[RMDB]
Background: An RNA of 177 nucleotides, treated with DMS and 2A3 and read out base by base. It was measured as part of the RMDB library OK2TRN. 2A3 adducts were read by reverse transcription with SuperScript II with manganese. The DMS profile rests on 3,004 reads.
RNA sequence: GGGAACGACUCGAGUAGAGUCGAAAAGUCUAGCGAACGGAUCCCACCCGGGACACACGCAAGUCGCGAAUUAGGCCGACCGGCCAAGGUCAAUUGCAGAACUCAACUGCAUGAGUAAGCUAGACGACCCUAAAUUUAUCUUCGGAUAAAUUUAGGGAAAAGAAACAACAACAACAAC
Reactivity to DMS in 0.01 (KOAc 150mM, MgCl2 10mM, bicine 150mM(pH8.5), 24C), signal-to-noise 4, nucleotides 027 to 126: g020u000c000u010a020g020c010g010a200a100c040g010g020a070u000c010c010c010a160c300c020c050g000g010g010a140c200a060c060a110c090g000c100a100a100g030u020c140g000c020g010a110a100u010u020a080g020g010c030c040g010a210c090c130g010g020c020c030a100a130g010g000u020c020a090a090u000u010g000c000a010g010a130a070c110u000c230a100a090c010u000g010c020a030u000g000a120g020u000a040a300g000c000u000a020g000a020c020g000a200
Reactivity to 2A3 in 0.01 (KOAc 150mM, MgCl2 10mM, bicine 150mM(pH8.5), 24C), signal-to-noise 4, nucleotides 027 to 126: g000u000c010u010a000g000c010g020a050a060c030g030g020a050u020c000c000c000a010c010c020c030g000g030g030a020c020a000c000a020c100g040c070a120a080g190u170c050g000c010g090a060a180u180u060a190g060g000c050c030g050a110c050c060g010g000c010c010a010a010g020g000u030c020a020a070u080u010g020c000a010g030a220a100c060u060c250a080a130c020u000g010c010a010u010g000a010g020u030a020a030g000c000u000a000g000a000c000g030a030